Structure probing data (2A3 and DMS) for a 177-nucleotide construct. For 2A3, 1,702 sequencing reads were counted. DMS adducts were read by reverse transcription with MarathonRT. As a SHAPE reagent, 2A3 marks flexible, mostly unpaired nucleotides at the ribose 2'-OH. The reactions ran in a buffer of 150 mM KOAc, 10 mM MgCl2 and 150 mM bicine (pH 8.5), at 24 C.
[RMDB]
RNA sequence: GGGAACGACUCGAGUAGAGUCGAAAAUUGACGUUCAUUAUUAUGUAAUCCAGGUGCAAUGAAUGCCCACAAUUGAUAAAACAUGACUGGUGAAAUGAAACAAAACGCGAUGAAAAAUAUAAUCAUCAUCAGUCUUCGAAUUCGUUCGAAGACUGAUAAAAGAAACAACAACAACAAC
Reactivity to 2A3 in 0.01 (KOAc 150mM, MgCl2 10mM, bicine 150mM(pH8.5), 24C), signal-to-noise 3, nucleotides 027 to 126: u050u030g140a050c040g010u020u040c040a000u000u120a060u140u080a120u270g150u170a040a100u020c030c010a030g080g000u090g060c010a010a020u030g060a080a010u080g060c030c000c000a030c010a010a120u060u070g050a020u180a160a100a030a040c050a070u030g080a040c020u040g040g050u010g040a050a030a030u080g050a090a050a000c050a000a070a000a000c090g030c040g020a010u070g050a070a140a020a030a000u150a020u130a220a040u040c010a000u000c000
Reactivity to DMS in 0.01 (KOAc 150mM, MgCl2 10mM, bicine 150mM(pH8.5), 24C), signal-to-noise 2, nucleotides 027 to 126: u010u000g000a300c000g000u010u000c000a030u000u030a090u020u110a100u000g020u000a050a060u010c030c110a030g000g000u000g000c050a100a000u010g000a090a190u040g000c040c000c000a070c220a110a020u000u050g000a060u040a090a080a110a120c090a030u010g030a090c040u000g000g050u010g000a030a040a000u000g010a090a010a060c050a100a100a150a030c100g050c090g000a000u000g000a000a100a030a090a030u040a080u030a060a070u060c040a000u020c050

The DMS profile rests on 1,618 reads.